[RMDB]
RNA sequence: GGGAACGACUCGAGUAGAGUCGAAAACACGUACGGAAACCAUCCCGCUAUAUCGGAUGGGAAAGCAUGCGGUCAGAUCUAUGCGUACGGAAACCAUCCAUGUGUAACGAACACGCGGACCGCGGACCUUCUAGGUCACCGGAUGGGAAAGCAUGCAACUACGUUACUAGUUCGCUAGUAACGUAGUAAAAGAAACAACAACAACAAC
Reactivity to 2A3 in 0.01 (KOAc 150mM, MgCl2 10mM, bicine 150mM(pH8.5), 24C), signal-to-noise 6, nucleotides 027 to 156: c070a010c010g030u050a000c020g040g050a060a040a050c010c000a000u050c060c060c030g020c140u120a080u040a090u300c040g010g000a010u010g010g000g030a070a000a020g010c010a010u020g000c020g050g030u120c060a050g020a180u060c030u160a040u150g040c010g010u000a000c010g020g040a080a020a010c000c000a000u020c010c020a080u110g010u010g010u040a100a100c130g060a070a010c090a020c090g040c030g050g050a040c040c070g000c000g010g010a010c000c000u180u210c130u280a070g000g010u020c010a010c050c060g020g000a010u010g000g000g030a040a060a000g020c010a000u030g000c010a020
Reactivity to DMS in 0.01 (KOAc 150mM, MgCl2 10mM, bicine 150mM(pH8.5), 24C), signal-to-noise 3, nucleotides 027 to 156: c060a050c020g000u000a070c030g030g000a170a080a150c030c000a040u000c030c000c030g040c150u000a210u000a170u000c110g000g010a040u010g000g000g010a030a060a100g000c010a030u000g030c020g030g050u000c080a120g000a100u000c070u000a100u010g020c030g000u000a070c000g000g000a150a110a150c020c000a070u020c020c010a090u000g020u000g010u000a140a160c200g010a100a120c060a060c000g040c060g000g020a070c080c030g020c050g020g000a050c020c010u000u000c130u000a080g010g040u000c000a020c020c020g040g020a120u000g010g020g000a040a060a190g000c000a040u000g000c020a210
Background:
Conditions: 150 mM KOAc, 10 mM MgCl2 and 150 mM bicine (pH 8.5), 24 C. This 207-nucleotide RNA was probed chemically with 2A3 and DMS. It was measured as part of the RMDB library OK3TST. Reactivities are given for positions 27 through 156. 2A3 adducts were read by reverse transcription with SuperScript II with manganese.